[RMDB]
About this RNA: The record gives the reactivity of an RNA of 207 nucleotides to 2A3 and DMS. For DMS the reverse transcriptase was MarathonRT. Values cover nucleotides 27 to 156. The RNA was probed in 150 mM KOAc, 10 mM MgCl2 and 150 mM bicine (pH 8.5) at 24 C. 2A3 adducts were read by reverse transcription with SuperScript II with manganese.

RNA sequence: GGGAACGACUCGAGUAGAGUCGAAAACGCCACACUGAUGAACGGGAAGCCUAACCCUACAUGGGAUCACUCGACAGUUAGGAAAAGCAGCGACUAUCUGGUUGAUACGUUUGCGGCAUUCCGUAAGGCAAUGCACAAAAAAGAGCUGCGCUGGUACUAUAUGAACAAGUUUCGACUUGUUCAUAUAAAAAGAAACAACAACAACAAC
Reactivity to 2A3 in 0.01 (KOAc 150mM, MgCl2 10mM, bicine 150mM(pH8.5), 24C), signal-to-noise 4, nucleotides 027 to 156: c070g050c020c000a030c000a010c060u120g060a080u090g040a160a030c030g030g000g030a060a020g040c000c010u060a090a080c020c010c000u100a090c080a220u170g010g010g010a040u070c040a030c120u040c020g030a020c020a040g010u030u040a010g060g000a060a060a050a010g010c010a010g000c010g030a030c020u010a010u010c010u030g160g060u130u110g060a040u060a130c080g030u030u040u110g120c140g030g000c010a010u020u000c010c000g050u090a050a080g010g000c050a010a010u040g010c050a030c030a080a050a050a020a010a030g040a010g030c010u030g010c010g020c050u010g000g000u030a070c040
Reactivity to DMS in 0.01 (KOAc 150mM, MgCl2 10mM, bicine 150mM(pH8.5), 24C), signal-to-noise 4, nucleotides 027 to 156: c050g020c030c020a090c060a140c040u010g020a080u000g020a120a090c000g020g000g010a090a160g030c020c030u010a060a150c020c010c000u000a080c100a090u000g020g020g000a150u000c060a110c030u010c030g030a060c060a080g000u000u000a080g030g000a050a040a070a160g030c030a040g000c020g020a070c010u000a020u000c020u010g010g020u000u000g010a100u010a080c100g010u000u010u000g060c060g010g010c020a290u000u010c000c010g010u000a090a100g020g000c110a030a030u000g010c000a140c030a000a040a030a100a090a130g000a130g030c000u000g000c020g010c060u000g010g000u000a080c080